An RNA of 207 nucleotides, treated with 2A3 and read out base by base. High 2A3 reactivity points to a flexible backbone, as in loops and unpaired stretches. The 2A3 profile rests on 995 reads. Reactivities are given for positions 27 through 156.
[RMDB]
RNA sequence: GGGAACGACUCGAGUAGAGUCGAAAAGGCUGAUCUCGCAGACCACCGACGUCGCCGACCGUGCUUUCCGGCUGUCCUCGGAGGCGCUGCGCAAGUACUUCGCCGACCACCCCACCAACGACUACUUCCUGUCGGCGUGGGUGCGGCCAGUGCGGCGGACACAAUGUCCGUUCGCGGACAUUGUGUCAAAAGAAACAACAACAACAAC
Reactivity to 2A3 in 0.01 (KOAc 150mM, MgCl2 10mM, bicine 150mM(pH8.5), 24C), signal-to-noise 2, nucleotides 027 to 156: g000g020c040u030g040a090u040c070u060c090g000c040a040g010a100c000c000a020c020c020g000a000c030g020u040c040g000c030c020g030a040c050c100g090u140g110c130u160u180u160c100c060g020g000c100u170g020u040c000c060u010c010g010g000a020g030g000c180g010c070u010g020c020g020c020a010a120g000u010a030c050u110u000c080g000c020c000g020a060c030c060a020c010c020c000c000a010c010c020a100a130c020g010a020c000u130a020c070u290u110c100c080u080g030u010c000g000g050c040g020u070g000g020g000u040g020c010g000g030c020c010a070g040u070g080c000g030g000c000g010